The data come from the RNA Mapping Database (RMDB), library OK2TST. The record gives the reactivity of an RNA of 177 nucleotides to DMS and 2A3. The 2A3 profile rests on 24,011 reads. The RNA was probed in 150 mM KOAc, 10 mM MgCl2 and 150 mM bicine (pH 8.5) at 24 C. The DMS profile rests on 16,467 reads. Reactivities are given for positions 27 through 126. Values are in units of 0.01, from 0 to 300, in steps of 10.
RNA sequence: GGGAACGACUCGAGUAGAGUCGAAAACAAAAUGAUCAUUCAGAUUAUCUGACUAGUAUUGUGCAAAACAGCGAUUUCACACCGCUGGAGGCCAGUAAUCAUAGUGUUGAGCUGGAUGACCGCUCGCCUUAUUCAUCGAAUUCGUUCGAUGAAUAAGAAAAGAAACAACAACAACAAC
Reactivity to DMS in 0.01 (KOAc 150mM, MgCl2 10mM, bicine 150mM(pH8.5), 24C), signal-to-noise 9, nucleotides 027 to 126: c080a070a070a080a090u010g010a030u000c020a020u000u000c010a020g000a090u010u010a080u010c030u000g010a030c020u000a040g000u000a020u000u000g010u010g020c010a030a040a100a300c010a010g000c010g010a030u000u010u010c290a120c210a050c090c000g010c010u000g000g010a180g000g010c000c000a010g010u000a010a060u010c100a100u000a020g010u000g020u000u000g010a040g010c000u000g000g000a030u000g000a020c010c020g010c130u000c110g010c300
Reactivity to 2A3 in 0.01 (KOAc 150mM, MgCl2 10mM, bicine 150mM(pH8.5), 24C), signal-to-noise 9, nucleotides 027 to 126: c020a000a080a020a100u230g020a090u020c010a010u030u020c000a010g070a090u070u100a060u170c020u070g060a010c000u000a010g040u010a030u030u060g090u140g040c010a030a090a140a130c000a010g000c000g020a020u070u230u240c080a060c010a010c040c020g000c010u010g010g010a040g120g000c000c010a000g010u030a050a090u110c100a170u030a030g020u040g100u120u050g010a010g010c000u010g010g010a010u020g010a010c010c020g060c020u050c030g060c010